The record gives the reactivity of an RNA of 207 nucleotides to DMS. For DMS, 1,626 sequencing reads were counted. The reactions ran in a buffer of 150 mM KOAc, 10 mM MgCl2 and 150 mM bicine (pH 8.5), at 24 C.
RNA sequence: GGGAACGACUCGAGUAGAGUCGAAAAGUUUAGUGCUUCCUUCAGGAGCUCUUGUAAGGCAGGCCUGGUGGUGACAAAAUCUCUCAGCAUUUGCUUGUCUGUAAAGGAUUUUAUUUCUCCUUCACUUAUGAAGCUUAGUUUGGCUGGAUAUGAAAUAUAUCCAGUCCACUUUCGAGUGGACUGGAUAAAAAGAAACAACAACAACAAC
Reactivity to DMS in 0.01 (KOAc 150mM, MgCl2 10mM, bicine 150mM(pH8.5), 24C), signal-to-noise 1, nucleotides 027 to 156: g020u010u000u000a050g030u010g000c030u000u010c030c020u000u020c100a180g020g030a080g010c050u000c010u000u010g020u000a090a040g030g000c050a020g010g000c030c020u020g030g010u010g030g050u000g010a150c050a060a040a080a300u000c060u030c100u000c030a050g030c080a090u000u000u000g000c040u000u000g010u000c030u010g000u000a040a040a100g010g030a050u000u000u010u000a130u030u000u000c060u000c030c020u020u000c110a070c040u010u000a110u020g000a040a040g030c020u010u010a060g040u000u000u070g010g030c050u000g020g020a130u000a080u030g000a120a030a060u050a200